This 177-nucleotide RNA was probed chemically with DMS and 2A3. Values are in units of 0.01, from 0 to 300, in steps of 10. The RNA was probed in 150 mM KOAc, 10 mM MgCl2 and 150 mM bicine (pH 8.5) at 24 C. It was measured as part of the RMDB library OK2TRN. DMS adducts were read by reverse transcription with MarathonRT. For 2A3, 5,399 sequencing reads were counted. Reactivities are given for positions 27 through 126.
RNA sequence: GGGAACGACUCGAGUAGAGUCGAAAAGUUAAGUCCCGCAACGAGCGCAACCCUUGUUCUGUGUUGCCAGCAUGCCCUUCGGGGUGAUGGGGACUCACAGGAGACUGCCGGGGUCAACUCGGAGGAACACACACUUUAGGUUCGCCUAAAGUGUGUGAAAAGAAACAACAACAACAAC
Reactivity to DMS in 0.01 (KOAc 150mM, MgCl2 10mM, bicine 150mM(pH8.5), 24C), signal-to-noise 5, nucleotides 027 to 126: g010u010u010a100a180g010u010c010c010c000g010c160a070a190c010g000a030g020c040g010c200a230a100c010c010c010u000u000g020u000u000c000u000g010u000g010u010u000g000c010c000a070g000c010a010u000g000c000c000c000u000u010c210g030g020g010g020u000g000a010u000g010g000g000g000a080c040u000c010a020c020a010g000g000a050g000a090c110u000g030c160c130g000g010g020g000u000c120a140a080c010u000c010g010g000a180g010g010a100a150
Reactivity to 2A3 in 0.01 (KOAc 150mM, MgCl2 10mM, bicine 150mM(pH8.5), 24C), signal-to-noise 3, nucleotides 027 to 126: g070u090u070a070a030g070u030c020c020c020g010c030a040a050c030g020a000g010c040g010c080a020a030c010c020c010u080u150g040u110u040c010u010g040u010g080u110u270g050c000c000a000g030c010a010u010g000c000c000c020u010u090c240g090g000g000g010u010g000a010u010g000g030g000g000a060c010u000c010a010c000a000g020g030a040g040a040c160u160g110c080c070g020g000g010g000u020c020a020a020c000u000c000g010g030a050g040g070a110a010